[RMDB]
This 207-nucleotide RNA was probed chemically with DMS and 2A3.

RNA sequence: GGGAACGACUCGAGUAGAGUCGAAAACAUGGCAGGAAAUGCUGGGCUCCUCCAGCUGCCGGAAGUCAGCCUUGUGGGCCUCACUGUGCCCACAUUGUUAGGGCCGAGGCUAGACCUUCUCUGUCCAUUUAGGUGUGAAACCAUUCCAGUGUAAAAACAUUACCACUCAGUUCGCUGAGUGGUAAUGAAAAGAAACAACAACAACAAC
Reactivity to DMS in 0.01 (KOAc 150mM, MgCl2 10mM, bicine 150mM(pH8.5), 24C), signal-to-noise 1, nucleotides 027 to 156: c020a110u010g030g010c010a050g010g000a070a130a050u010g010c020u000g010g040g010c100u010c150c060u020c010c020a060g010c050u010g040c000c000g000g010a100a060g010u000c030a240g010c000c000u030u000g090u000g020g000g000c000c030u030c080a070c160u000g020u020g020c000c000c000a050c000a020u000u000g050u000u000a180g030g010g000c000c030g000a280g010g030c050u000a140g030a160c080c030u000u000c010u000c010u020g010u010c040c010a150u000u000u000a030g020g020u000g000u010g020a060a120a060c020c020a190u000u000c030c000a140g000u000g000u020a080a040a070a080a140
Reactivity to 2A3 in 0.01 (KOAc 150mM, MgCl2 10mM, bicine 150mM(pH8.5), 24C), signal-to-noise 3, nucleotides 027 to 156: c070a050u060g000g010c040a010g030g040a050a050a040u080g000c000u000g010g020g020c160u100c060c020u100c010c010a000g000c000u030g020c020c040g030g070a010a010g030u060c030a010g090c000c000u010u010g000u030g020g000g000c000c010u060c020a090c100u070g070u160g010c000c020c000a000c010a010u000u030g020u050u160a090g020g030g040c000c000g010a020g020g000c020u060a020g040a060c000c000u060u040c130u000c010u000g110u110c010c020a020u070u090u200a080g000g010u030g020u020g160a150a140a030c000c000a020u120u080c040c010a040g020u060g010u150a020a020a090a010a020
2A3 adducts were read by reverse transcription with SuperScript II with manganese.
It was measured as part of the RMDB library OK3TST.
Reactivities are rounded to 0.1 and cut off at 0 and 3.
For DMS, 2,863 sequencing reads were counted.
The RNA was probed in 150 mM KOAc, 10 mM MgCl2 and 150 mM bicine (pH 8.5) at 24 C.